[RMDB]
RNA sequence: GGGAACGACUCGAGUAGAGUCGAAAAAGCCGGGUGCGUCGCGACAACACCGGCUACGACCUGCCCGCGCUGUUCGUCGGGGCCGAAGGCACCCUGGGGGUUAUCACCGCGCUGGAUCUGCGGCUGCGUUAAGAUGAUCGUUCGCGAUCAUCUUAACAAAAGAAACAACAACAACAAC
Reactivity to DMS in 0.01 (KOAc 150mM, MgCl2 10mM, bicine 150mM(pH8.5), 24C), signal-to-noise 4, nucleotides 027 to 126: a050g010c020c000g000g000g010u020g010c090g000u010c070g000c060g010a060c060a090a090c050a110c020c080g000g010c000u000a040c100g020a060c060c040u000g000c100c020c020g020c140g020c100u000g020u000u010c070g020u020c040g000g010g010g010c040c030g000a100a110g000g000c030a100c020c010c010u010g000g010g030g010g000u000u010a040u020c070a110c040c040g000c030g000c060u000g000g000a080u010c070u010g010c040g010g000c040u000g000c190
Reactivity to 2A3 in 0.01 (KOAc 150mM, MgCl2 10mM, bicine 150mM(pH8.5), 24C), signal-to-noise 6, nucleotides 027 to 126: a000g030c010c000g010g010g010u120g050c090g040u040c030g020c030g090a060c030a120a000c030a050c050c010g000g010c000u020a020c040g090a060c010c030u020g030c010c010c010g020c010g010c070u040g040u100u070c060g060u040c010g060g000g040g000c020c010g080a070a050g030g000c010a060c020c010c030u030g030g000g000g000g010u060u080a120u130c040a020c040c000g010c010g010c030u050g030g050a060u020c030u070g020c000g030g000c030u020g020c020

Chemical mapping of a 177-nucleotide RNA with DMS and 2A3. Reactivities are rounded to 0.1 and cut off at 0 and 3.